An RNA of 177 nucleotides, treated with 2A3 and DMS and read out base by base.
RNA sequence: GGGAACGACUCGAGUAGAGUCGAAAAACAAUAACCAUACAAAUACCAAUCUUCCGGAACGGAAACGAAUCUGACACACUGGUGGUCUGGCAAAGCAGUGGUCACAGUGGCUGGCCAGGGACGAGAGCGCUACAAAUCUGUUCGCAGAUUUGUAGCGAAAAGAAACAACAACAACAAC
Reactivity to 2A3 in 0.01 (KOAc 150mM, MgCl2 10mM, bicine 150mM(pH8.5), 24C), signal-to-noise 3, nucleotides 027 to 126: a000c040a020a070u190a070a070c020c010a050u150a240c070a010a050a050u120a070c030c030a050a100u030c000u030u000c000c020g050g110a150a070c050g050g000a050a050a030c050g060a030a090u020c050u050g010a010c040a000c000a010c030u040g110g000u040g000g040u080c020u000g000g070c060a110a090a040g040c020a070g100u030g060g020u050c000a000c000a110g150u090g070g050c040u000g040g000c000c020a010g000g020g020a000c050g050a070g010a010g090
Reactivity to DMS in 0.01 (KOAc 150mM, MgCl2 10mM, bicine 150mM(pH8.5), 24C), signal-to-noise 2, nucleotides 027 to 126: a090c180a120a070u010a040a130c040c050a060u010a160c270a120a080a090u060a010c140c080a040a090u040c090u000u020c000c000g000g030a200a150c120g060g020a000a020a040c020g000a030a090u020c050u000g000a070c030a050c030a020c110u010g000g050u010g000g010u000c010u060g000g000c030a050a130a160g000c020a050g000u030g000g010u010c000a040c050a100g010u000g000g000c030u000g000g000c020c030a040g010g000g010a180c050g000a030g000a040g000

The 2A3 profile rests on 1,776 reads.
For DMS the reverse transcriptase was MarathonRT.
The RNA was probed in 150 mM KOAc, 10 mM MgCl2 and 150 mM bicine (pH 8.5) at 24 C.
Values cover nucleotides 27 to 126.